This 207-nucleotide RNA was probed chemically with 2A3 and DMS. The data come from the RNA Mapping Database (RMDB), library OK3TST. The RNA was probed in 150 mM KOAc, 10 mM MgCl2 and 150 mM bicine (pH 8.5) at 24 C. For 2A3, 1,083 sequencing reads were counted. DMS (dimethyl sulfate) methylates the pairing face of unpaired adenines and cytosines.
[RMDB]
RNA sequence: GGGAACGACUCGAGUAGAGUCGAAAAAUGGGGAUCUGAACUCCGCUGCUUUCAUUGCUCAAUUUCAUGCCAUUCGCGGUGUUUAAAAAGGCUGUUUGCAGAGUCGGAGCAUGAGAAAACAAUGAGUGAAACUGUAAGUGAAAAUAGUAAAUGGAUAUCAUAGGUGAGCAUUCGUGCUCACCUAUGAAAAAGAAACAACAACAACAAC
Reactivity to 2A3 in 0.01 (KOAc 150mM, MgCl2 10mM, bicine 150mM(pH8.5), 24C), signal-to-noise 3, nucleotides 027 to 156: a000u070g020g000g030g000a020u050c010u050g020a020a020c010u000c010c040g000c030u050g000c030u040u090u050c050a110u070u250g000c010u020c070a070a300u000u090u040c020a020u080g040c010c010a070u120u120c100g010c100g090g000u030g010u040u060u080a070a080a000a010a000g020g000c000u000g010u010u070u060g040c060a020g020a000g130u050c060g020g000a000g020c020a050u040g030a010g060a060a120a010a010c060a000a140u060g010a030g040u020g000a140a020a010c080u090g010u100a080a020g010u030g110a020a090a050a030u110a080g080u150a050a020a210u130g030g050a020u140a000
Reactivity to DMS in 0.01 (KOAc 150mM, MgCl2 10mM, bicine 150mM(pH8.5), 24C), signal-to-noise 1, nucleotides 027 to 156: a080u000g000g020g010g010a110u000c070u000g010a060a160c030u000c020c030g000c000u000g000c010u000u010u000c030a040u000u010g040c020u000c060a070a130u000u010u000c060a040u000g000c000c050a180u000u030c060g030c090g010g110u000g010u010u000u010a040a030a130a120a060g030g000c000u000g000u000u000u010g020c000a110g000a000g020u000c070g000g010a110g000c070a080u000g010a100g000a080a040a100a080c060a050a080u000g000a120g020u000g010a100a070a070c010u020g000u010a040a110g040u000g000a080a050a010a070u000a050g000u000a070a060a100u000g000g010a120u000a140